[RMDB]
RNA sequence: GGGAACGACUCGAGUAGAGUCGAAAAGAUAUGGAGGUGGCAACAGCCAUAGUUCGGAAACGAACUGAUGGACAUGCCAUCUCCUAAGUCAAAGCAAAUUCACGUUGUUCGCAACGUGAAUUUGCAAUCGAUAGGUACAGUUCGCUGUACCUAUCGAAAAAGAAACAACAACAACAAC
Reactivity to 2A3 in 0.01 (KOAc 150mM, MgCl2 10mM, bicine 150mM(pH8.5), 24C), signal-to-noise 3, nucleotides 027 to 126: g020a010u060a010u130g000g010a000g020g020u020g010g030c010a060a050c070a300g060c020c000a020u010a000g010u010u000c020g000g010a030a040a020c020g010a010a010c010u080g160a040u010g010g040a050c010a050u030g000c000c010a000u000c010u010c000c000u010a010a000g010u000c040a080a070a010g000c000a020a010a010u000u000c000a000c020g000u000u020g060u070u060c280g030c200a010a010c010g010u000g000a000a000u000u000u000g010c000a000a000
Reactivity to DMS in 0.01 (KOAc 150mM, MgCl2 10mM, bicine 150mM(pH8.5), 24C), signal-to-noise 4, nucleotides 027 to 126: g000a020u010a300u000g010g010a000g010g020u000g010g000c000a030a050c250a180g000c000c000a010u000a020g000u000u010c000g000g000a080a070a140c010g010a000a000c000u000g000a010u000g000g000a110c080a240u010g010c000c000a010u000c000u000c000c000u000a010a080g010u000c030a140a110a150g000c010a000a020a000u000u010c000a010c000g010u000u000g010u000u030c300g030c000a000a010c000g010u010g000a000a010u000u000u000g000c000a010a030
Chemical mapping of a 177-nucleotide RNA with 2A3 and DMS. Source: RMDB library TTRDEL, as collected in RNAgym. The 2A3 profile rests on 9,436 reads. Values cover nucleotides 27 to 126. The RNA was probed in 150 mM KOAc, 10 mM MgCl2 and 150 mM bicine (pH 8.5) at 24 C. Values are in units of 0.01, from 0 to 300, in steps of 10.